[RMDB]
RNA sequence: GGGAACGACUCGAGUAGAGUCGAAAAUACUUAUUCUCUGGCUGGGGAUGAGCUUUUAUACUCUUGAGCUGGAUAGGUCUAGGCAUAUUAUCAUUCAUGAGGGGCACUCAGCAUGGCUUUUUCAUGACCUUAUACGACAGUUCGCUGUCGUAUAAGGAAAAGAAACAACAACAACAAC
Reactivity to 2A3 in 0.01 (KOAc 150mM, MgCl2 10mM, bicine 150mM(pH8.5), 24C), signal-to-noise 2, nucleotides 027 to 126: u040a010c010u080u060a040u220u040c020u000c110u130g140g030c040u030g000g000g000g050a050u060g040a030g010c000u130u120u000u180a160u070a110c010u030c000u040u060g090a030g020c040u010g060g000a020u050a080g060g000u000c050u070a060g000g000c040a040u050a060u190u050a080u070c020a030u060u050c020a020u070g020a050g010g050g000g020c020a020c040u070c000a030g030c020a050u020g080g030c030u170u060u030u110u040c030a030u040g000a040
Reactivity to DMS in 0.01 (KOAc 150mM, MgCl2 10mM, bicine 150mM(pH8.5), 24C), signal-to-noise 3, nucleotides 027 to 126: u010a090c080u000u000a080u010u000c030u000c010u010g010g010c070u000g000g000g020g000a040u010g010a050g010c110u010u000u010u010a080u010a070c040u010c020u000u000g010a080g000c070u000g000g010a070u000a020g010g040u000c060u010a110g000g000c080a070u020a040u020u000a090u020c070a070u010u000c040a050u010g010a040g000g020g000g010c030a060c060u000c070a040g020c080a110u000g000g030c080u000u000u020u000u010c010a050u010g010a280